RNA sequence: GGGAACGACUCGAGUAGAGUCGAAAAGAGCGGCAGAGGGACUGGCCCGAUGAAGCCCAGCAACCUAACUUUAUUUAAGCGUAAAGUGAAGGUGCUAAUUCCAGCAAAAUGGUGUAUUCCGUUUUGGUUUAUCCGCCCUGGUUCGCCAGGGCGGAAAGAGUGUUAAAAGAUUCGUCUUUUAACACUCAAAAGAAACAACAACAACAAC
Reactivity to 2A3 in 0.01 (KOAc 150mM, MgCl2 10mM, bicine 150mM(pH8.5), 24C), signal-to-noise 2, nucleotides 027 to 156: g040a010g030c150g000g000c010a000g000a000g010g000g010a010c020u030g010g020c000c010c000g040a070u010g000a000a010g000c010c020c000a000g000c010a050a120c000c000u010a020a010c000u000u030u040a050u060u160u120a160a040g140c020g040u000a000a000a010g010u010g060a120a060g000g000u000g010c000u000a000a050u120u020c010c000a010g010c030a020a000a020a020u060g020g020u070g030u150a110u190u050c030c020g010u010u000u010u010g050g000u080u090u070a050u040c000c010g000c000c000c010u010g010g000u050u050c090g030c030c010a000g020g000g000c010g000g000a000a000a000
Reactivity to DMS in 0.01 (KOAc 150mM, MgCl2 10mM, bicine 150mM(pH8.5), 24C), signal-to-noise 2, nucleotides 027 to 156: g010a100g000c020g020g020c020a080g020a180g000g010g000a130c040u000g020g010c000c000c020g000a170u000g010a090a150g000c000c010c050a090g010c040a010a060c010c000u000a180a010c010u000u000u000a010u020u000u000a130a240g010c270g000u010a010a010a030g010u000g010a070a050g020g000u000g000c010u000a090a200u000u000c020c000a100g010c070a030a020a020a050u000g010g020u000g020u000a080u000u000c010c010g020u000u000u010u000g010g010u010u010u000a150u000c000c010g000c000c000c000u020g000g000u000u010c300g000c010c000a000g000g000g000c000g000g000a010a010a050